Structure probing data (DMS) for a 177-nucleotide construct.
RNA sequence: GGGAACGACUCGAGUAGAGUCGAAAAGGGUGCACACCUGUGAUCCCAGCUACUCAGGAGGCUGAGGCUAAAGAAUCACUUGAACCUGGGAGGCAGAGGUUGCAGUAAGCCAAGAUCACACCAUUGCCUAGAGGUUCAAGUUCGCUUGAACCUCUAGAAAAGAAACAACAACAACAAC
Reactivity to DMS in 0.01 (KOAc 150mM, MgCl2 10mM, bicine 150mM(pH8.5), 24C), signal-to-noise 3, nucleotides 027 to 126: g010g000g000u000g010c100a090c170a090c080c040u000g000u010g000a110u000c000c040c030a040g000c060u000a140c020u010c040a070g020g010a150g010g010c030u020g000a080g010g010c080u010a050a070a080g030a080a090u000c080a090c050u010u000g000a040a040c130c030u000g000g010g000a190g000g010c010a060g010a060g010g000u020u000g020c030a090g000u000a040a100g000c070c070a060a080g010a070u010c070a050c060a130c050c020a100u020u010g010c230
Overview
For DMS, 2,110 sequencing reads were counted. Conditions: 150 mM KOAc, 10 mM MgCl2 and 150 mM bicine (pH 8.5), 24 C. DMS (dimethyl sulfate) methylates the pairing face of unpaired adenines and cytosines.